Source: RMDB library M2PK90, as collected in RNAgym. Chemical mapping of a 177-nucleotide RNA with DMS and 2A3. Reactivities are given for positions 27 through 126.
[RMDB]
RNA sequence: GGGAACGACUCGAGUAGAGUCGAAAAUAAAAGGAGGAUGAGAUAUAUAGAGAGAUAUCGGUACUCCCACGCGCGUCUCUCAUUGAUAAGAGUGAUAAAAGGGUGAUUAUGUUAUAGCGCGCAAAAACAAUAUCGCUUACUUCGGUAAGCGAUAUUGAAAAGAAACAACAACAACAAC
Reactivity to DMS in 0.01 (KOAc 150mM, MgCl2 10mM, bicine 150mM(pH8.5), 24C), signal-to-noise 3, nucleotides 027 to 126: u000a060a060a100a130g020g000a030g020g010a090u010g000a130g010a030u010a020u000a090u000a140g010a140g000a100g010a030u000a010u000c010g010g010u000a110c060u000c000c010c080a110c110g020c000g010c080g000u010c050u000c010u000c010a120u000u010g020a070u010a090a050g000a050g010u000g000a070u000a030a040a080a090g010g000g010u000g010a080u010u020a050u010g010u010u000a060u000a130g010c000g000c020g010c090a040a030a090a060a060
Reactivity to 2A3 in 0.01 (KOAc 150mM, MgCl2 10mM, bicine 150mM(pH8.5), 24C), signal-to-noise 3, nucleotides 027 to 126: u120a000a090a010a010g020g010a010g030g010a090u070g050a050g000a090u020a010u010a010u110a180g080a010g000a000g030a090u000a010u020c000g010g000u040a030c020u000c020c020c010a020c050g000c010g010c020g050u000c000u000c000u020c020a040u020u080g040a020u050a150a120g020a010g060u080g040a030u100a080a110a020a020g110g000g030u080g070a100u050u180a100u150g080u100u060a100u100a100g000c000g010c000g000c000a080a050a000a020a000
2A3 adducts were read by reverse transcription with SuperScript II with manganese. For DMS, 2,475 sequencing reads were counted. Conditions: 150 mM KOAc, 10 mM MgCl2 and 150 mM bicine (pH 8.5), 24 C.